[RMDB]
RNA sequence: GGGAACGACUCGAGUAGAGUCGAAAAAUCUUGGCGAAGUCAGCGCGGAAGGAGCGCGCAACUCCUUACCCUCGCCUUUUUUUUUCCGCUCCGGUUCGCGAAAGCGUUCAGCGGAAAAGGGACCAAAAUUGAAGUGGGAGUUCGCUCCCACUUCAAUAAAAGAAACAACAACAACAAC
Reactivity to DMS in 0.01 (KOAc 150mM, MgCl2 10mM, bicine 150mM(pH8.5), 24C), signal-to-noise 1, nucleotides 027 to 126: a020u000c040u000u000g020g000c000g010a020a090g000u010c170a120g000c140g010c220g030g000a060a020g010g010a030g000c030g020c270g030c140a100a120c000u000c020c010u000u000a100c100c010c050u000c010g000c000c000u000u000u000u000u000u000u000u000u000c010c000g000c050u000c160c090g030g010u000u000c000g020c000g000a080a010a140g010c010g000u010u010c000a090g000c010g070g000a000a000a000a020g010g030g010a110c070c080a070a030a090